[RMDB]
RNA sequence: GGGAACGACUCGAGUAGAGUCGAAAACAGGCUACAAAUCACCUGACCUCGGGCUAAGUGCCCAUCAGCUGUGGCAGAGAAUGGCAGGGGAGGGGACUUAUGGCUGCCUUGGAUGUGGUCAUGUGAGUCAUGAAUAGUCGUUCGCGACUAUUCAUGAAAAAGAAACAACAACAACAAC
Reactivity to DMS in 0.01 (KOAc 150mM, MgCl2 10mM, bicine 150mM(pH8.5), 24C), signal-to-noise 5, nucleotides 027 to 126: c140a130g010g020c060u010a100c110a090a110a150u000c070a040c050c040u000g000a080c070c070u000c200g010g000g010c010u010a070a130g030u010g010c020c020c010a110u000c050a050g020c100u000g010u000g020g030c040a070g010a080g000a090a130u010g010g010c100a080g010g000g010g010a130g010g000g000g000a090c100u010u000a050u000g010g010c040u010g010c020c030u000u010g020g010a070u010g000u000g000g010u000c010a020u010g000u010g010a060g000
Reactivity to 2A3 in 0.01 (KOAc 150mM, MgCl2 10mM, bicine 150mM(pH8.5), 24C), signal-to-noise 4, nucleotides 027 to 126: c020a000g100g000c020u090a050c060a070a240a110u080c010a040c030c000u020g030a050c010c030u100c090g030g020g000c020u120a190a130g090u120g200c000c030c010a060u050c020a000g040c010u060g010u080g130g000c020a000g050a010g060a230a120u100g040g000c080a020g010g010g000g040a060g000g010g000g010a010c010u110u110a060u140g050g000c010u010g000c000c020u050u140g110g030a080u080g040u040g040g020u020c000a010u020g040u040g040a010g060